[RMDB]
RNA sequence: GGGAACGACUCGAGUAGAGUCGAAAAACGCAGGCUACGGCCUGCGAAUCAGGGCUUGGAUUGUGAUCUCGUAUAUUUAUGAGAUCAUUAUUCAAGCUCUCUAAAUACGUGGAGUACGCUCCACGAAGGCAUCCAACCUAUUCGUAGGUUGGAUGCCAAAAGAAACAACAACAACAAC
Reactivity to 2A3 in 0.01 (KOAc 150mM, MgCl2 10mM, bicine 150mM(pH8.5), 24C), signal-to-noise 2, nucleotides 027 to 126: a020c020g040c000a000g010g000c000u040a090c220g150g010c000c010u000g000c000g000a000a000u080c060a020g000g000g000c000u000u000g000g000a000u000u010g010u000g010a000u000c000u000c010g020u060a060u000a040u080u300u000a010u070g000a000g000a000u000c000a000u000u000a000u000u000c000a020a000g010c000u000c000u000c000u040a070a090a010u150a020c020g000u000g000g000a000g020u070a020c250g090c060u000c000c000a010c000g000a010a040

An RNA of 177 nucleotides, treated with 2A3 and read out base by base. 2A3 adducts were read by reverse transcription with SuperScript II with manganese. Source: RMDB library RFM100, as collected in RNAgym. Values cover nucleotides 27 to 126. The reactions ran in a buffer of 150 mM KOAc, 10 mM MgCl2 and 150 mM bicine (pH 8.5), at 24 C.